RNA sequence: GGGAACGACUCGAGUAGAGUCGAAAAGAUGGGUCCGAUGGAUUAAUGCGUCGCCCGCCAUUGGAUCCUGAUUGAUAGAUUGAGGGCGACGGUCGGAUCACUCGGUAAUUCGGUGCUCAACGAGUGAUCCGUGAUGAUAGUUAAGAUGAGCACCUAAGGUAUCAUAUGGUUUCGACCAUAUGAUACCAAAAGAAACAACAACAACAAC
Reactivity to 2A3 in 0.01 (KOAc 150mM, MgCl2 10mM, bicine 150mM(pH8.5), 24C), signal-to-noise 5, nucleotides 027 to 156: g070a060u100g000g000g010u000c000c000g000a000u000g020g000a030u120u230a210a110u300g120c000g000u000c000g000c000c000c000g000c000c000a000u000u000g000g010a000u010c010c010u050g050a110u080u090g030a020u060a130g150a090u040u190g110a120g000g000g000c000g000a000c000g000g010u030c000g000g000a000u000c000a000c000u000c000g050g040u120a110a090u180u240c060g000g000u020g000c000u010c000a000a000c000g000a000g000u000g000a000u000c000c000g000u000g020a020u060g010a030u020a110g150u210u200a140a050g030a090u070g000a000g010c000a000c000c000u000a030a020

This 207-nucleotide RNA was probed chemically with 2A3. The 2A3 profile rests on 3,448 reads. Reactivities are given for positions 27 through 156. As a SHAPE reagent, 2A3 marks flexible, mostly unpaired nucleotides at the ribose 2'-OH. The reactions ran in a buffer of 150 mM KOAc, 10 mM MgCl2 and 150 mM bicine (pH 8.5), at 24 C.